[RMDB]
RNA sequence: GGGAACGACUCGAGUAGAGUCGAAAAUUACCUGCAUAGGUUGUGAUACUUUCGGUGAGGAAAAUCCUGAUUUCUUCCCUUCUAUUUUAGCUUUAGAACAAUCUUCCAUGCAUCCUAUAGCUCAAGCCCUUAAAACCUGUUUCGACAGGUUUUAAGGAAAAGAAACAACAACAACAAC
Reactivity to 2A3 in 0.01 (KOAc 150mM, MgCl2 10mM, bicine 150mM(pH8.5), 24C), signal-to-noise 2, nucleotides 027 to 126: u080u000a150c000c010u000g000c040a060u060a080g010g000u020u040g030u030g040a100u100a120c020u090u110u130c140g060g000u140g040a040g020g030a060a030a000a030u100c030c070u120g090a180u020u040u000c000u020u000c030c010c000u020u000c080u060a230u050u120u050u120a070g050c050u040u060u080a040g030a070a010c010a050a050u010c000u090u000c060c020a020u040g010c010a010u010c010c000u050a040u060a100g020c010u060c070a070a000g130c020
Reactivity to DMS in 0.01 (KOAc 150mM, MgCl2 10mM, bicine 150mM(pH8.5), 24C), signal-to-noise 3, nucleotides 027 to 126: u010u000a090c040c020u010g020c080a040u000a050g000g010u000u010g020u020g020a120u000a060c130u000u000u000c120g020g020u020g030a070g000g000a040a040a090a060u000c050c100u010g030a150u000u000u000c050u000u000c010c020c000u000u000c030u000a060u010u000u010u010a110g020c190u010u010u000a030g000a050a080c090a050a070u000c020u000u020c100c080a060u000g020c040a040u020c030c020u000a050u000a090g020c060u010c100a080a180g010c200